[RMDB]
RNA sequence: GGGAACGACUCGAGUAGAGUCGAAAAGAUAUGGACGUAGAGCAACAGCUAGUGGAUCGGAAACGAUCCCUAGACAUGCUUCAAGUCCUAAGUCAAAGUUGUAUGAUACUUCGGUAUCAUACAACAACAACAUCGCUUACUUCGGUAAGCGAUGUUGAAAAGAAACAACAACAACAAC
Reactivity to DMS in 0.01 (KOAc 150mM, MgCl2 10mM, bicine 150mM(pH8.5), 24C), signal-to-noise 2, nucleotides 027 to 126: g000a000u000a170u000g000g000a000c000g010u030a300g000a010g000c010a070a070c300a120g010c020u030a000g000u010g040g000a020u000c000g000g000a050a010a070c000g030a000u000c000c000c000u000a010g000a020c100a120u000g010c000u010u000c010a300a280g020u000c000c000u000a030a060g000u000c000a110a090a140g020u000u000g000u000a000u000g000a040u000a000c010u020u030c180g030g000u000a000u000c000a010u000a000c000a000a000c000a100a150
Reactivity to 2A3 in 0.01 (KOAc 150mM, MgCl2 10mM, bicine 150mM(pH8.5), 24C), signal-to-noise 1, nucleotides 027 to 126: g030a000u010a040u050g000g020a010c050g090u300a060g010a010g050c050a110a260c160a210g060c030u010a000g010u220g280g000a010u000c000g000g030a020a010a000c000g010a000u000c040c000c000u000a020g020a020c010a130u110g000c000u000u020c010a000a010g000u090c000c000u000a000a010g020u010c050a030a100a110g000u000u000g010u000a000u000g000a000u000a000c010u030u130c300g130g000u000a010u000c010a000u000a010c000a000a000c000a000a000
Chemical mapping of a 177-nucleotide RNA with DMS and 2A3. For DMS, 1,364 sequencing reads were counted. It was measured as part of the RMDB library TTRDEL. The RNA was probed in 150 mM KOAc, 10 mM MgCl2 and 150 mM bicine (pH 8.5) at 24 C.